[RMDB]
RNA sequence: GGGAACGACUCGAGUAGAGUCGAAAACCGAUUAGGCGUGGAGGCGAAAGUCACCCUCCUCGCAUCGCAAGUUCGUGCUUGCGACUUACACGUAGGGCGAGGGGUGGGCGAAAGUUGCCAUGAGACCAAAAUAUGUAGUUCUUCGGAACUACAUAAACGUGAGUAGCUUAUUCGUAAGCUACUCACGAAAAGAAACAACAACAACAAC
Reactivity to 2A3 in 0.01 (KOAc 150mM, MgCl2 10mM, bicine 150mM(pH8.5), 24C), signal-to-noise 2, nucleotides 027 to 156: c000c000g010a200u140u160a070g000g060c010g000u000g010g050a070g050g000c050g030a110a060a000g100u070c080a160c040c010c000u020c020c000u000c010g000c040a020u000c010g000c010a000a030g080u200u220c100g150u300g110c020u000u020g050c050g000a020c010u080u160a060c090a030c140g100u140a070g010g150g000c010g010a010g010g020g040g030u110g010g020g030c070g000a000a090a000g020u060u070g030c040c000a030u070g110a060g090a160c050c060a080a090a000a000u060a000u000g030u020a000g000u010u010c000u020u040c210g090g000a000a000c000u000a000c000a000u000a020a060a000
Structure probing data (2A3) for a 207-nucleotide construct. The RNA was probed in 150 mM KOAc, 10 mM MgCl2 and 150 mM bicine (pH 8.5) at 24 C. Values cover nucleotides 27 to 156.